[RMDB]
RNA sequence: GGGAACGACUCGAGUAGAGUCGAAAAAAUCAUCACCGUCAUCGAUAACUGUAGUCUUGGGCUUCUUUUUGCGACUCUUCAUUCCGGAACGCAUAUUGGUGCUAUCCAUUUAGGUAGUAAAAAAUAAGUCAGAAUAUGCCCUAUAACACGAUCGUGCUAUCAUGAGUCCAUUCGUGGACUCAUGAUAAAAAGAAACAACAACAACAAC
Reactivity to 2A3 in 0.01 (KOAc 150mM, MgCl2 10mM, bicine 150mM(pH8.5), 24C), signal-to-noise 3, nucleotides 027 to 156: a010a000u170c090a020u040c100a040c040c010g050u050c020a070u060c020g080a040u050a220a100c070u100g040u090a050g070u050c030u070u040g030g000g000c020u050u010c000u040u130u050u100u110g060c060g060a080c040u000c030u260u130c050a120u170u030c030c020g010g040a090a010c060g010c020a030u020a080u020u050g100g010u030g000c010u030a030u040c020c040a080u070u130u100a070g050g010u010a020g020u040a080a000a000a040a020a130u090a000a070g050u060c040a000g090a060a070u130a040u110g030c020c000c010u040a070u010a060a070c050a000c060g040a040u060c030g010u000g060c060
Reactivity to DMS in 0.01 (KOAc 150mM, MgCl2 10mM, bicine 150mM(pH8.5), 24C), signal-to-noise 2, nucleotides 027 to 156: a040a070u000c030a100u010c060a240c040c040g010u000c010a100u000c050g010a120u000a070a100c070u010g020u000a060g030u010c060u000u000g010g040g030c030u020u000c030u000u000u000u000u000g010c020g030a050c020u000c010u000u010c060a180u000u010c090c000g000g000a080a070c120g030c020a100u000a070u000u000g060g010u000g010c010u000a070u000c010c020a220u000u000u000a050g010g030u000a010g040u000a000a000a050a020a040a130u000a030a130g010u000c050a130g000a040a020u000a110u000g010c010c040c030u000a110u000a070a070c040a140c020g000a110u000c060g010u000g050c110